[RMDB]
RNA sequence: GGGAACGACUCGAGUAGAGUCGAAAAAAUUUAGAUUAUCCAGGUGUUGCGGUGAAAUUCGUAGAGAUCUGGUGGAUAAUGAACCGGUGGCGAAGGCGAAAGAUAACCGCUGAAAUGCUGAAGUGAACUUGAGACAUUACUUCGGUAAUGUCUCAAGAAAAGAAACAACAACAACAAC
Reactivity to DMS in 0.01 (KOAc 150mM, MgCl2 10mM, bicine 150mM(pH8.5), 24C), signal-to-noise 2, nucleotides 027 to 126: a060a030u000u000u000a110g000a140u000u000a080u000c010c020a110g000g010u000g020u000u000g010c030g000g010u010g000a030a090a100u000u000c010g010u000a080g000a100g010a160u000c020u000g020g010u000g000g010a050u030a110a030u000g000a160a080c010c030g000g040u000g000g040c300g000a040a120g000g000c020g000a020a040a030g000a040u000a140a100c050c010g000c050u010g000a060a020a140u000g030c020u000g010a110a100g020u010g010a100a120
This 177-nucleotide RNA was probed chemically with DMS. Source: RMDB library M2PK90, as collected in RNAgym. For DMS, 1,355 sequencing reads were counted.